Structure probing data (DMS and 2A3) for a 207-nucleotide construct. The 2A3 profile rests on 1,314 reads. The RNA was probed in 150 mM KOAc, 10 mM MgCl2 and 150 mM bicine (pH 8.5) at 24 C. DMS adducts were read by reverse transcription with MarathonRT. Reactivities are rounded to 0.1 and cut off at 0 and 3. Reactivities are given for positions 27 through 156. For 2A3 the reverse transcriptase was SuperScript II with manganese.
RNA sequence: GGGAACGACUCGAGUAGAGUCGAAAAGCAAGUUCGCUUGCCCAGCCGAUAUGGACCAAAUGGAGCGAGCAGGAGAGGUCUUCGGAAACGAAGACUACCCACCUCCUGCACUCGCGAUGAAAUUUGGUCCUAAGUCCAACAUUCUGUUCGCAGAAAAAAGCACUCAAAAUUUCGAUUUUGAGUGCUUAAAAGAAACAACAACAACAAC
Reactivity to DMS in 0.01 (KOAc 150mM, MgCl2 10mM, bicine 150mM(pH8.5), 24C), signal-to-noise 3, nucleotides 027 to 156: g010c000a070a100g000u000u000c210g020c010u000u000g010c010c010c020a300g030c060c040g000a210u000a200u010g000g010a040c030c000a030a020a020u000g010g000a090g020c000g000a030g050c010a040g000g000a030g030a170g050g050u000c000u000u000c020g020g030a180a160a290c000g000a030a010g000a010c000u000a020c010c020c020a300c140c000u000c000c000u000g010c050a030c030u000c010g030c000g050a050u000g030a070a070a050u000u000u000g000g010u000c000c010u000a010a070g000u010c030c040a100a060c060a100u000u000c010u000g000u000u000c090g030c010a050g030a000a100a080a190
Reactivity to 2A3 in 0.01 (KOAc 150mM, MgCl2 10mM, bicine 150mM(pH8.5), 24C), signal-to-noise 1, nucleotides 027 to 156: g020c010a000a040g090u150u140c090g110c110u030u040g030c030c030c010a030g210c120c020g000a040u030a020u170g000g000a000c010c010a000a020a000u000g000g000a010g000c040g020a010g000c010a000g010g000a000g010a010g000g020u010c010u000u000c000g010g010a090a010a020c010g000a000a010g010a000c050u020a020c010c020c000a060c020c000u000c000c020u010g000c020a080c090u010c000g000c000g060a040u030g000a000a000a010u000u000u000g000g000u000c000c000u010a000a000g000u000c020c000a130a030c030a240u100u000c010u010g120u130u110c250g040c170a010g050a070a030a000a300